[RMDB]
RNA sequence: GGGAACGACUCGAGUAGAGUCGAAAAGAAUGGAAGCCGGCGGCACCUCGCUAACGGCCAAGAAUUGGAGCCAAUCAAUUCUUGCGGAGAACUGUGAAUGCGCAAACCAACCCUUGGCCAUCGCGUCCUCACCUGUAUUCUUCGGAAUACAGGUGAGAAAAGAAACAACAACAACAAC
Reactivity to 2A3 in 0.01 (KOAc 150mM, MgCl2 10mM, bicine 150mM(pH8.5), 24C), signal-to-noise 2, nucleotides 027 to 126: g040a070a060u110g040g030a110a020g020c030c030g000g030c010g040g010c040a040c050c030u020c000g000c040u020a030a020c020g030g000c010c000a020a010g020a020a040u040u030g000g020a010g030c040c020a000a060u040c010a010a010u070u010c030u010u060g090c060g040g170a070g010a060a030c110u140g030u070g150a060a070u130g050c060g000c100a140a090a110c020c010a020a030c020c010c000u010u010g000g000c010c000a060u070c040g010c030g060u070c000
Reactivity to DMS in 0.01 (KOAc 150mM, MgCl2 10mM, bicine 150mM(pH8.5), 24C), signal-to-noise 2, nucleotides 027 to 126: g000a100a090u010g000g030a090a110g010c070c070g010g030c060g000g040c040a100c070c040u010c030g010c020u010a070a120c180g030g000c040c010a010a000g010a030a050u000u000g000g010a150g020c070c100a040a090u010c020a010a050u000u010c000u010u010g020c140g020g000a060g000a060a030c110u020g020u000g020a060a080u000g020c060g000c050a040a100a110c030c010a010a050c090c020c010u010u000g000g010c010c040a030u010c160g000c060g030u000c080
The data come from the RNA Mapping Database (RMDB), library OK2TRN. Structure probing data (2A3 and DMS) for a 177-nucleotide construct. The 2A3 profile rests on 1,979 reads. Values cover nucleotides 27 to 126. High 2A3 reactivity points to a flexible backbone, as in loops and unpaired stretches. The reactions ran in a buffer of 150 mM KOAc, 10 mM MgCl2 and 150 mM bicine (pH 8.5), at 24 C.